Structure probing data (2A3 and DMS) for a 207-nucleotide construct. The RNA was probed in 150 mM KOAc, 10 mM MgCl2 and 150 mM bicine (pH 8.5) at 24 C.
RNA sequence: GGGAACGACUCGAGUAGAGUCGAAAACAUCUUUCCUCCCUACACAGUGACUCCAGCUUGGGAGGGGCAGGGCUAGGCUGAGCCAGCACUCCCUGUGGUGUCUGUCUGCCACGUGCAGCUCUGGAGUAAAACCUGGAGAAGUUCGCUUCUCCAGGAACAUUCACGAAAAGUUCGCUUUUCGUGAAUGAAAAGAAACAACAACAACAAC
Reactivity to 2A3 in 0.01 (KOAc 150mM, MgCl2 10mM, bicine 150mM(pH8.5), 24C), signal-to-noise 4, nucleotides 027 to 156: c020a070u110c050u090u150u070c020c010u050c010c010c000u140a090c190a030c030a140g060u050g080a010c000u020c000c000a000g000c040u050u060g000g000g010a010g000g010g020g000c000a010g020g000g000c020u300a020g020g000c010u030g040a050g260c110c050a000g010c000a000c010u020c000c010c010u020g000u030g010g030u050g060u030c040u020g070u000c010u010g030c020c020a240c240g130u280g010c000a000g000c020u030c000u040g000g000a000g000u020a020a050a000a000c000c000u000g000g000a000g010a000a000g020u070u140c150g010c150u000u000c000u000c000c000a000g000g000a000a000
Reactivity to DMS in 0.01 (KOAc 150mM, MgCl2 10mM, bicine 150mM(pH8.5), 24C), signal-to-noise 1, nucleotides 027 to 156: c090a130u000c110u000u000u010c020c010u010c010c000c000u000a160c120a140c130a120g000u020g010a090c010u000c000c000a090g000c160u000u000g010g010g010a050g040g000g010g030c060a040g000g030g020c040u000a030g000g030c020u030g000a280g050c100c050a110g040c030a100c020u000c000c000c010u030g030u000g020g000u020g020u000c040u020g000u010c050u000g000c000c000a090c040g000u000g000c040a070g010c050u000c020u000g010g010a080g040u000a060a070a100a170c010c010u000g000g010a040g030a040a050g000u020u000c300g030c020u020u000c000u000c000c010a000g000g000a030a030